[RMDB]
RNA sequence: GGGAACGACUCGAGUAGAGUCGAAAAAAGCAAAUCCACGUGUGAGUGGAAACAGGCAAUUCAAACCCGUGUUAUUCAAGAGUCAACUGCUUAUCUACUUAUCUAUUUCUGCUUUUUGCUUUAUCUGAAACUUGAAGAUUUUUGAUAUCAAUAUAUACUCAUGACGAGGUUUCGACCUCGUCAUGAGAAAAGAAACAACAACAACAAC
Reactivity to 2A3 in 0.01 (KOAc 150mM, MgCl2 10mM, bicine 150mM(pH8.5), 24C), signal-to-noise 1, nucleotides 027 to 156: a000a140g010c030a040a100a000u000c000c030a040c040g000u140g120u140g060a090g000u030g050g000a030a110a000c050a000g000g090c030a060a040u110u200c060a080a010a170c020c000c020g070u010g050u160u140a060u100u090c080a150a040g040a060g070u010c060a050a090c010u010g070c030u080u130a080u190c000u040a000c000u210u030a010u070c040u030a060u040u040u090c040u050g000c020u000u150u000u070u070g010c020u020u090u090a040u000c060u030g040a050a040a070c010u090u200g040a010a080g040a090u090u080u150u220u240g010a000u050a030u090c000a050a000u180a000u150a140u220a140
The record gives the reactivity of an RNA of 207 nucleotides to 2A3. Values are in units of 0.01, from 0 to 300, in steps of 10. The 2A3 profile rests on 324 reads. The data come from the RNA Mapping Database (RMDB), library OK3TST. The RNA was probed in 150 mM KOAc, 10 mM MgCl2 and 150 mM bicine (pH 8.5) at 24 C.